[RMDB]
RNA sequence: GGGAACGACUCGAGUAGAGUCGAAAAGCUUUUGACCCUCUUGAUGGGUCCUCCAUCGUCGAUGCCGACUUCGCUGUCGGGACCAUCUUCGGCAUCUGGCCCUCCCAGCAGUUGAGGGGCGUGACGGCCGACGGGAUACGUUCGCGUAUCCCGUCGGAAAAGAAACAACAACAACAAC
Reactivity to 2A3 in 0.01 (KOAc 150mM, MgCl2 10mM, bicine 150mM(pH8.5), 24C), signal-to-noise 1, nucleotides 027 to 126: g070c030u130u270u160u170g070a060c020c090c020u060c060u170u200g210a120u110g090g000g000u040c000c020u020c010c010a090u030c010g060u010c000g130a060u130g040c000c000g030a180c000u090u040c060g000c160u010g000u060c020g010g010g010a000c000c010a080u030c090u160u150c030g040g080c010a060u070c090u060g170g040c000c030c000u010c020c030c010a000g050c020a040g010u170u180g000a020g010g070g010g000c010g000u090g070a050c000g000g000
Reactivity to DMS in 0.01 (KOAc 150mM, MgCl2 10mM, bicine 150mM(pH8.5), 24C), signal-to-noise 1, nucleotides 027 to 126: g020c200u000u000u010u000g020a090c000c000c010u000c260u000u000g010a090u000g020g010g000u010c010c070u020c050c050a070u020c040g010u020c010g010a090u000g000c070c010g010a120c110u000u000c180g000c050u010g020u000c100g010g010g000a070c190c100a090u010c130u020u000c030g010g060c020a170u000c090u030g020g000c010c020c160u020c020c010c000a080g030c030a060g000u000u020g000a080g000g050g000g000c010g020u020g000a050c040g000g010

Annotation
Structure probing data (2A3 and DMS) for a 177-nucleotide construct. The 2A3 profile rests on 790 reads. Source: RMDB library OK2TRN, as collected in RNAgym. DMS adducts were read by reverse transcription with MarathonRT. For DMS, 1,021 sequencing reads were counted.